[RMDB]
RNA sequence: GGGAACGACUCGAGUAGAGUCGAAAAGGGGUUCCGGGCUUACCUACGGGAACUGCUGGUUGCCCCUGAUGUCCAGCCCAUCUCCCGUCCUAGAGAAGGGAGAUUCCGGAACUCCAGUCAUUUGAGGGACGAAGCCGCCCCCGGGCGCUCCCCUCGGCAUGCCUUAGAUGUUCGCAUCUAAGGCAUGAAAAGAAACAACAACAACAAC
Reactivity to 2A3 in 0.01 (KOAc 150mM, MgCl2 10mM, bicine 150mM(pH8.5), 24C), signal-to-noise 1, nucleotides 027 to 156: g000g000g020g010u010u020c010c010g030g000g010c060u090u130a300c040c050u020a020c040g000g020g000a080a050c060u130g010c060u050g050g010u030u150g040c000c020c030c040u000g050a130u120g010u000c020c000a000g040c080c010c010a080u050c010u020c010c010c010g010u000c030c060u260a170g050a100g030a280a030g000g000g000a010g000a000u140u020c020c020g010g000a000a000c000u000c020c010a020g090u080c040a070u010u010u300g000a000g000g000g010a010c050g050a130a050g080c170c070g000c000c050c000c020c040g050g000g000c000g000c010u000c010c000c000c000u000c000g000g050

Chemical mapping of a 207-nucleotide RNA with 2A3. The data come from the RNA Mapping Database (RMDB), library VIROID. High 2A3 reactivity points to a flexible backbone, as in loops and unpaired stretches. The RNA was probed in 150 mM KOAc, 10 mM MgCl2 and 150 mM bicine (pH 8.5) at 24 C. Values are in units of 0.01, from 0 to 300, in steps of 10.